[RMDB]
RNA sequence: GGGAACGACUCGAGUAGAGUCGAAAAAAAGAUAUGGACGAGAGUAAGGAUGAUGACCAUACGGCCGGGGUAUGUCGGAAACGACAUACAAGAAUGUAUGCAAGUCUAUCUCUCGUCCUAAGUCAAAUCACACUAUCUACUUCGGUAGAUAGUGUGAAAAAGAAACAACAACAACAAC
Reactivity to DMS in 0.01 (KOAc 150mM, MgCl2 10mM, bicine 150mM(pH8.5), 24C), signal-to-noise 3, nucleotides 027 to 126: a060a120a120g000a000u000a060u000g000g000a000c010g010a010g040a030g000u000a110a200g000g000a030u000g010a090u020g010a140c300c000a000u000a010c050g020g010c300c090g000g000g000g010u000a000u000g000u000c000g000g010a010a020a030c000g000a010c010a010u000a000c000a030a080g010a100a300u030g000u000a000u010g000c000a000a060g010u000c000u010a100u000c000u000c000u000c000g030u000c000c000u000a000a030g000u000c010a020a140a190
Reactivity to 2A3 in 0.01 (KOAc 150mM, MgCl2 10mM, bicine 150mM(pH8.5), 24C), signal-to-noise 2, nucleotides 027 to 126: a000a000a010g030a020u030a010u070g000g010a000c010g010a000g010a020g000u160a300a300g100g000a030u050g080a210u020g010a010c020c000a000u010a010c020g080g000c070c050g100g060g170g000u000a000u000g000u000c000g030g040a020a000a010c000g000a000c010a000u000a000c000a000a000g020a020a020u080g000u010a000u010g000c040a090a160g000u000c020u000a150u100c010u000c000u040c000g000u010c000c000u000a000a010g000u000c020a000a070a160
The record gives the reactivity of an RNA of 177 nucleotides to DMS and 2A3. The data come from the RNA Mapping Database (RMDB), library TTRDES.